RNA sequence: GGGAACGACUCGAGUAGAGUCGAAAAGCUCCUGUAGCUCAGGGGGCAGGCCUGAGCCCUGCACCCGCCCCACGACCGUCCAGCCCCUGACGGGGCACCCCAUCCUGAGGGGCUCUGCAUUGGCCCCCUGAUUCUCUAGGUUCGCCUAGAGAAUCAGAAAAGAAACAACAACAACAAC
Reactivity to DMS in 0.01 (KOAc 150mM, MgCl2 10mM, bicine 150mM(pH8.5), 24C), signal-to-noise 2, nucleotides 027 to 126: g000c060u000c000c070u030g020u030a070g010c060u000c070a110g000g000g000g010g000c030a080g020g010c050c130u040g020a170g000c050c050c010u000g010c020a040c040c000c010g000c060c030c000c030a050c080g040a100c010c030g000u000c060c060a140g000c020c000c030c060u030g010a100c160g000g010g010g040c010a030c010c010c000c010a070u010c030c020u010g030a140g000g000g000g000c010u000c120u040g000c080a070u000u010g010g010c010c000c010c030
Reactivity to 2A3 in 0.01 (KOAc 150mM, MgCl2 10mM, bicine 150mM(pH8.5), 24C), signal-to-noise 2, nucleotides 027 to 126: g020c020u030c020c060u100g120u210a040g010c030u040c160a060g000g000g000g020g000c010a010g010g030c010c090u060g040a030g010c050c000c000u020g000c010a040c010c000c010g010c020c000c010c000a030c010g040a030c010c020g030u040c010c030a020g000c000c000c000c000u030g020a040c110g000g000g010g000c000a020c000c000c000c010a060u090c010c050u050g050a080g010g010g010g010c020u040c010u060g060c030a150u070u160g030g000c000c000c000c010